[RMDB]
An RNA of 207 nucleotides, treated with 2A3 and read out base by base. The reactions ran in a buffer of 150 mM KOAc, 10 mM MgCl2 and 150 mM bicine (pH 8.5), at 24 C. Reactivities are rounded to 0.1 and cut off at 0 and 3. Source: RMDB library RSTRND, as collected in RNAgym. For 2A3, 1,027 sequencing reads were counted.
RNA sequence: GGGAACGACUCGAGUAGAGUCGAAAAAGCGAGCCGAGGUCCCCACCUCCUCGUAAAAAAGGUGGGACAAAGAAUAAGUGCCAACGAACCUGUUGCUGUUGCCGCUUAAUAGAUAAGCGGCCGUCCUCUCCGAAGUUGGCUGGGCUUCGGAAGAGGGGCGAUUAGUACUGUUCGCAGUACUAAUCGCAAAAGAAACAACAACAACAAC
Reactivity to 2A3 in 0.01 (KOAc 150mM, MgCl2 10mM, bicine 150mM(pH8.5), 24C), signal-to-noise 1, nucleotides 027 to 156: a020g050c010g010a010g020c010c010g000a000g000g000u000c000c010c010c000a000c000c000u180c010c000u010c010g130u080a000a000a000a000a020a000g000g000u030g000g010g000a000c040a000a100a030g120a020a040u100a150a000g020u040g050c030c000a050a020c060g070a030a040c060c050u060g000u010u030g010c010u010g010u060u010g000c030c030g030c000u030u050a110a070u090a280g140a020u040a110a020g020c000g030g000c000c040g000u000c000c000u000c010u000c000c000g000a000a000g010u080u110g030g000c000u010g020g000g000c010u000u000c000g000g010a100a040g000a010g030g010g010